Conditions: 150 mM KOAc, 10 mM MgCl2 and 150 mM bicine (pH 8.5), 24 C.
An RNA of 207 nucleotides, treated with 2A3 and DMS and read out base by base.
The 2A3 profile rests on 575 reads.
DMS (dimethyl sulfate) methylates the pairing face of unpaired adenines and cytosines.
[RMDB]
RNA sequence: GGGAACGACUCGAGUAGAGUCGAAAAGGGUGACCCAAUGGCCCGAAGACUGGUAGAUCACUGUUCUUCUAUUAGGAGCAGUUUUGUCUCCCAGAGAAUAUUUGGCAAUGUCAGGAGACAUUUUUGGUUGUCACAGCUGGAGUGGAGGGCCACUAUGAUAUCACCUCCAUUUCGAUGGAGGUGAUAUAAAAGAAACAACAACAACAAC
Reactivity to 2A3 in 0.01 (KOAc 150mM, MgCl2 10mM, bicine 150mM(pH8.5), 24C), signal-to-noise 1, nucleotides 027 to 156: g090g010g040u050g020a050c020c000c040a000a120u050g040g000c000c000c010g000a010a000g050a010c010u000g020g050u050a030g000a020u060c010a020c010u000g010u010u000c010u010u000c100u130a210u180u280a180g010g010a000g030c010a010g000u040u010u100u080g010u000c000u000c000c010c010a000g000a000g020a110a000u120a100u170u060u030g020g020c030a020a030u100g020u080c030a070g160g060a080g060a060c010a000u070u080u120u180u100g070g010u070u080g030u000c030a000c040a060g030c040u080g020g030a070g050u050g000g130a050g020g010g090c070c000a000c010u090a060u160g110
Reactivity to DMS in 0.01 (KOAc 150mM, MgCl2 10mM, bicine 150mM(pH8.5), 24C), signal-to-noise 2, nucleotides 027 to 156: g060g030g040u000g000a140c030c030c020a040a090u010g020g010c010c020c060g020a130a190g010a130c020u020g010g020u000a100g020a050u000c300a070c020u010g010u000u000c010u000u000c090u010a210u010u010a100g020g000a030g010c010a030g030u020u000u010u000g010u000c000u000c030c000c010a080g030a170g020a070a060u000a130u000u000u000g020g020c030a070a090u010g010u000c020a080g020g010a260g030a030c010a030u000u000u000u000u000g040g010u000u010g000u000c030a100c060a140g020c000u000g000g010a110g030u000g060g000a100g000g030g020c010c020a040c040u000a140u000g000